[RMDB]
RNA sequence: GGGAACGACUCGAGUAGAGUCGAAAAUGGCAGCACCUGAAGGCUACAUCAUCCGUAUUCAGGGUGAGACCAACAGCUCAGCCGAUGAGUAUUUCGUGAAGUAUGACUCCGCGAAGAAGACUUGGCGGCGCUGAACAAAGUUCGCUUUGUUCAGCGCAAAAGAAACAACAACAACAAC
Reactivity to DMS in 0.01 (KOAc 150mM, MgCl2 10mM, bicine 150mM(pH8.5), 24C), signal-to-noise 2, nucleotides 027 to 126: u080g020g020c180a150g050c030a150c060c020u000g000a140a150g000g040c030u000a160c100a210u010c040a080u000c010c060g050u050a080u020u020c120a070g020g000g000u000g000a040g000a000c040c050a050a060c120a080g000c070u040c100a120g020c030c000g060a000u000g020a030g000u040a050u060u000u000c000g000u000g000a070a020g000u020a080u020g050a040c000u000c010c000g030c030g020a060a020g010a060a110g000a120c040u020u000g000g000c040g000
Reactivity to 2A3 in 0.01 (KOAc 150mM, MgCl2 10mM, bicine 150mM(pH8.5), 24C), signal-to-noise 3, nucleotides 027 to 126: u060g040g010c020a040g030c000a060c050c010u010g020a160a010g040g000c060u120a040c030a140u090c000a040u020c030c040g090u090a190u130u170c040a030g010g020g020u020g070a030g010a060c030c000a010a050c070a010g020c020u050c060a020g000c010c010g010a050u060g010a000g010u020a060u010u050u010c000g000u020g050a050a030g040u160a110u300g100a120c020u010c000c010g010c010g010a000a020g060a050a000g060a030c010u040u120g060g020c010g030
Background
Structure probing data (DMS and 2A3) for a 177-nucleotide construct. Values cover nucleotides 27 to 126.